[RMDB]
RNA sequence: GGGAACGACUCGAGUAGAGUCGAAAAAAGUCGACAGAUAUGGGGGUGUAGCCGUGGCAAUAAGGCCACUGGGGUGAGUAAAGAAAUGCACUCGCCUCCCACACUUGGAAAGGUGAUCAUGUCUCAACAACCAUGUAUGCUUCGGCAUACAUGGUUGAAAAGAAACAACAACAACAAC
Reactivity to DMS in 0.01 (KOAc 150mM, MgCl2 10mM, bicine 150mM(pH8.5), 24C), signal-to-noise 1, nucleotides 027 to 126: a060a040g000u000c070g000a070c190a000g000a080u010a070u000g000g010g000g020g000u070g000u000a090g030c050c070g020u000g000g000c010a240a090u000a050a120g010g040c000c010a000c020u000g010g000g010g020u000g010a000g000u040a000a200a030g000a090a040a010u000g020c300a040c000u000c010g020c000c000u000c000c060c050a300c020a050c000u000u000g050g000a060a250a060g000g010u000g000a080u000c150a130u000g010u000c030u000c040a090a250
Structure probing data (DMS) for a 177-nucleotide construct.
Reactivities are given for positions 27 through 126.
For DMS the reverse transcriptase was MarathonRT.
The data come from the RNA Mapping Database (RMDB), library RFMREP.
Conditions: 150 mM KOAc, 10 mM MgCl2 and 150 mM bicine (pH 8.5), 24 C.